[RMDB]
RNA sequence: GGGAACGACUCGAGUAGAGUCGAAAAGGGGAUGCUGACAGUCACCUCUCCUGUCAUACUGCUACCUCAGGUGGACAACAAGGCAUUAUGUUUACCAAAGAGAGCAAGCCUUCAAAAAAUAGAUCCUUGGUGCCUGAAACAAGCAGGCAUACUGGAAGAUUACCUAAUGGUUCGCCAUUAGGUAAUCAAAAGAAACAACAACAACAAC
Reactivity to DMS in 0.01 (KOAc 150mM, MgCl2 10mM, bicine 150mM(pH8.5), 24C), signal-to-noise 2, nucleotides 027 to 156: g000g030g070g010a060u000g000c190u010g020a220c050a070g030u010c010a020c040c000u000c010u010c010c000u000g030u000c040a150u000a120c040u010g000c010u000a090c050c020u000c020a160g000g030u000g030g000a080c040a060a110c100a050a080g000g040c080a170u000u000a170u000g010u000u000u000a120c060c050a110a070a080g020a040g030a060g050c020a110a080g020c030c030u000u000c060a000a050a090a050a080a120u000a090g000a080u000c030c000u020u010g030g020u010g020c000c020u000g000a160a090a120c110a120a280g000c020a050g000g030c000a030u000a060c040u020g020g020a160a160
Reactivity to 2A3 in 0.01 (KOAc 150mM, MgCl2 10mM, bicine 150mM(pH8.5), 24C), signal-to-noise 5, nucleotides 027 to 156: g000g000g010g030a030u070g010c070u070g050a030c030a040g030u080c020a040c070c030u040c010u030c010c000u030g040u030c020a040u070a190c040u060g000c010u080a150c020c010u040c020a020g000g020u010g020g030a010c000a090a030c050a110a110g160g000c040a020u060u110a080u220g020u020u030u020a020c020c010a050a160a010g070a000g000a020g020c040a020a030g030c020c020u090u090c120a090a070a010a000a000a010u130a050g070a060u010c010c010u050u080g040g000u010g010c010c000u010g020a090a180a070c050a110a030g090c010a000g010g000c010a010u050a110c010u020g020g020a030a030